[RMDB]
RNA sequence: GGGAACGACUCGAGUAGAGUCGAAAAUUUCAGUGGCGAUUUUGAUGCCGCCUUCGAAACACUUCAUCAGACUGCCAUACGCUCAUGCUGUAGUCCAGUAAGUUGAAGUAUUAGACUACAACGUAAACCGUAUCAGCGAUUUCGAUCGCUGAUACGGAAAAGAAACAACAACAACAAC
Reactivity to DMS in 0.01 (KOAc 150mM, MgCl2 10mM, bicine 150mM(pH8.5), 24C), signal-to-noise 1, nucleotides 027 to 126: u000u000u000c030a140g140u010g070g000c030g040a050u000u150u180u050g050a200u040g020c150c020g000c000c130u010u000c030g000a160a000a170c070a030c000u000u000c050a000u000c020a110g000a090c000u000g020c290c110a050u000a020c060g000c120u000c170a150u000g000c000u040g170u000a000g000u040c300c000a000g000u000a000a110g000u000u000g000a040a050g000u000a000u050u000a190g000a030c200u000a000c300a000a080c140g030u000a140a060a220
Reactivity to 2A3 in 0.01 (KOAc 150mM, MgCl2 10mM, bicine 150mM(pH8.5), 24C), signal-to-noise 2, nucleotides 027 to 126: u010u050u140c060a010g040u040g020g040c030g070a060u000u070u020u290g130a110u210g050c030c000g000c010c000u130u100c070g110a070a040a000c030a010c020u030u000c000a060u000c030a000g010a030c020u000g000c020c040a040u010a060c000g020c080u030c060a020u260g000c060u060g000u000a020g020u030c040c030a080g000u120a280a000g000u070u070g050a020a000g000u030a020u070u090a020g020a000c000u040a050c110a090a000c000g150u170a100a000a000